[RMDB]
RNA sequence: GGGAACGACUCGAGUAGAGUCGAAAAUGCUACACCGACUACACGUAAUUACCGGUGUAGCUACGGUAGUUACGACAACUGAUCCGAGAGGAUCUACAUUAAGGCGAAGGUGAAAUAUAGGUUAAUAGGCACCUGAAGCCGAACCUAUUAACCAACAAGUCCUAUAGGUAUUCGUACCUAUAGGACUAAAAGAAACAACAACAACAAC
Reactivity to 2A3 in 0.01 (KOAc 150mM, MgCl2 10mM, bicine 150mM(pH8.5), 24C), signal-to-noise 6, nucleotides 027 to 156: u110g000c010u000a000c010a000c000c000g070a040c090u230a050c170a060c120g190u220a150a140u170u160a110c040c020g000g000u010g010u000a000g000c000u020a020c010g010g010u020a020g010u020u070a030c080g020a030c120a090a040c120u080g000a000u000c000c000g040a040g010a030g090g000a000u000c000u020a010c010a050u100u150a090a040g040g000c010g020a010a000g010g000u030g040a020a070a010u300a050u140a150g000g000u000u000a000a000u010a010g000g000c010a000c020c000u020g040a020a000g000c000c000g000a000a000c000c000u000a000u000u010a000a000c000c010a000a030c040a040
Reactivity to DMS in 0.01 (KOAc 150mM, MgCl2 10mM, bicine 150mM(pH8.5), 24C), signal-to-noise 4, nucleotides 027 to 156: u000g000c010u020a030c030a110c020c010g010a100c040u000a100c110a140c140g020u010a110a100u010u000a060c040c020g050g040u000g000u000a070g000c010u000a000c020g010g030u000a050g000u000u000a060c040g020a110c040a050a200c060u010g010a010u000c000c000g020a300g010a300g040g030a040u000c000u000a070c120a130u000u010a110a080g000g030c030g030a220a100g050g020u010g010a150a080a100u010a110u010a130g000g010u000u000a020a030u000a020g020g000c010a010c150c070u000g010a110a120g040c020c030g020a050a110c010c000u000a010u010u000a030a020c020c000a100a120c120a100

An RNA of 207 nucleotides, treated with 2A3 and DMS and read out base by base. For 2A3 the reverse transcriptase was SuperScript II with manganese. The reactions ran in a buffer of 150 mM KOAc, 10 mM MgCl2 and 150 mM bicine (pH 8.5), at 24 C. For DMS, 5,870 sequencing reads were counted. It was measured as part of the RMDB library OK3TST. 2A3 is a SHAPE reagent: it acylates the 2'-hydroxyl of flexible nucleotides of all four kinds.